The record gives the reactivity of an RNA of 177 nucleotides to 2A3. The reactions ran in a buffer of 150 mM KOAc, 10 mM MgCl2 and 150 mM bicine (pH 8.5), at 24 C. For 2A3, 1,613 sequencing reads were counted.
[RMDB]
RNA sequence: GGGAACGACUCGAGUAGAGUCGAAAACUGCUUUGCAGUGCUGGCGACCUAUUCCCUUUGACGAUCCCUAGGUGGAGAUGGGGCAUGAGGAUCCUCCAGGGGAAUAGCUCACCACCACUGGGCAACACGCUCAGUGUGGCUUCGGCCACACUGAGCGAAAAGAAACAACAACAACAAC
Reactivity to 2A3 in 0.01 (KOAc 150mM, MgCl2 10mM, bicine 150mM(pH8.5), 24C), signal-to-noise 2, nucleotides 027 to 126: c030u030g040c020u070u080u300g060c000a010g000u000g010c020u010g000g020c020g000a000c000c000u000a000u000u010c000c010c000u000u000u000g000a000c000g000a000u030c040c000c000u060a120g100g070u190g120g150a180g040a150u300g020g010g020g030c010a030u150g020a100g040g000a000u000c000c020u010c020c020a020g000g000g030g000a000a000u000a000g000c000u010c000a020c000c000a000c000c010a010c010u010g000g020g020c000a020a000c090a080